RNA sequence: GGGAACGACUCGAGUAGAGUCGAAAACGCCAUUUCAGGAAUCGGCGGGCUCGGCCAUGUUGCCGUGCAGUACGCCCGCGCGAUGGGCUUGCGGGUGGUGGCCAUCGACAUCGAUGACGACAAGCUCCUCCCUAUUUACGUUCGCGUAAAUAGGGAGAAAAGAAACAACAACAACAAC
Reactivity to 2A3 in 0.01 (KOAc 150mM, MgCl2 10mM, bicine 150mM(pH8.5), 24C), signal-to-noise 7, nucleotides 027 to 126: c040g030c000c000a060u080u130u170c110a110g100g080a080a030u030c010g010g000c000g010g000g000c040u030c020g010g010c040c020a280u300g100u170u190g070c020c010g020u060g050c020a020g060u080a040c130g020c010c010c000g000c010g030c010g010a020u060g000g000g020c020u050u050g000c030g010g030g010u130g010g040u030g040g000c020c010a050u030c020g110a160c030a130u200c060g030a020u070g050a060c040g050a050c020a050a020g000c000u010c010
Reactivity to DMS in 0.01 (KOAc 150mM, MgCl2 10mM, bicine 150mM(pH8.5), 24C), signal-to-noise 3, nucleotides 027 to 126: c100g000c020c030a090u010u010u030c060a110g000g020a090a040u000c020g030g000c000g000g010g010c000u000c010g020g000c010c030a120u040g020u030u020g000c000c020g000u010g020c110a140g000u040a080c190g000c000c000c000g030c010g000c020g000a040u010g000g000g000c010u010u010g000c120g000g010g000u010g000g010u030g000g000c030c010a030u000c010g010a190c300a160u020c030g000a030u000g000a090c030g000a100c060a040a090g030c050u010c070